[RMDB]
Chemical mapping of a 177-nucleotide RNA with DMS. For DMS the reverse transcriptase was MarathonRT. The reactions ran in a buffer of 150 mM KOAc, 10 mM MgCl2 and 150 mM bicine (pH 8.5), at 24 C. DMS (dimethyl sulfate) methylates the pairing face of unpaired adenines and cytosines. The DMS profile rests on 1,118 reads.
RNA sequence: GGGAACGACUCGAGUAGAGUCGAAAAGAUAUGGACAGGUUCGCUCCGUUAUGACAGCAACAGCCUGACGGGUCGGAAACGACCUACAGGACAUGCUGGAGUAACGGAGCGAACCUGUCCUAAGUCACAUGGAGUGUAUCUUCGGAUACACUCCAUGAAAAGAAACAACAACAACAAC
Reactivity to DMS in 0.01 (KOAc 150mM, MgCl2 10mM, bicine 150mM(pH8.5), 24C), signal-to-noise 2, nucleotides 027 to 126: g000a040u000a300u010g030g000a010c020a000g020g000u000u000c020g000c030u000c000c010g090u000u000a020u000g010a300c020a010g010c010a030a060c300a190g010c000c000u000g000a170c280g040g000g040u000c010g000g010a100a100a120c000g020a000c010c000u040a040c060a020g000g030a060c110a230u020g000c020u000g020g000a300g020u000a000a010c010g080g000a040g010c000g000a000a000c000c030u000g010u000c000c000u000a000a060g000u010c070a240